[RMDB]
This 207-nucleotide RNA was probed chemically with 2A3 and DMS.
High 2A3 reactivity points to a flexible backbone, as in loops and unpaired stretches.
For DMS, 2,891 sequencing reads were counted.
Source: RMDB library RNAMAK, as collected in RNAgym.
The 2A3 profile rests on 4,668 reads.
Reactivities are rounded to 0.1 and cut off at 0 and 3.

RNA sequence: GGGAACGACUCGAGUAGAGUCGAAAACAAGGAUUCGUCCUUGACCUUCUCCUAAGUCACUUCCCUCAGUGGAGAACGAUAAGAAUCGGAAACGAUUCUUUUGACGUUCGAUGAAACUGACCAAGUGAUAUGGAAUCCUCACUUCUUCGGAAGUGAAAACACCGGUUUAUUUCGAUAAACCGGUGUUAAAAGAAACAACAACAACAAC
Reactivity to 2A3 in 0.01 (KOAc 150mM, MgCl2 10mM, bicine 150mM(pH8.5), 24C), signal-to-noise 4, nucleotides 027 to 156: c000a000a000g000g010a010u060u120c230g080u020c110c000u020u010g060a100c010c010u100u130c070u020c030c000u080a160a080g010u000c000a000c010u020u020c000c000c000u020c000a010g010u000g000g010a010g000a000a010c010g010a020u020a070a000g000a000a000u000c010g030g040a060a060a040c020g010a010u010u000c000u000u000u010u040g130a070c010g000u000u000c010g030a130u020g000a000a000a000c000u000g010a010c030c050a040a000g000u000g000a010u000a050u070g000g020a030a060u060c000c030u020c020a000c000u000u010c010u040u080c200g120g010a000a010g010u000g000a130a020
Reactivity to DMS in 0.01 (KOAc 150mM, MgCl2 10mM, bicine 150mM(pH8.5), 24C), signal-to-noise 2, nucleotides 027 to 156: c040a010a010g030g010a050u000u000c190g050u010c000c020u010u010g010a130c050c020u000u020c070u000c030c030u000a070a300g000u000c000a000c010u000u000c090c040c050u000c000a030g000u000g000g010a160g000a010a010c030g000a150u020a030a010g020a010a020u000c000g030g000a150a190a300c000g000a010u000u000c000u000u000u000u000g020a140c140g030u000u000c000g020a090u000g070a150a170a060c010u000g000a020c060c060a040a060g040u010g010a020u000a300u000g010g020a060a090u000c070c070u030c020a010c000u000u000c000u000u000c300g040g000a030a020g060u000g000a030a130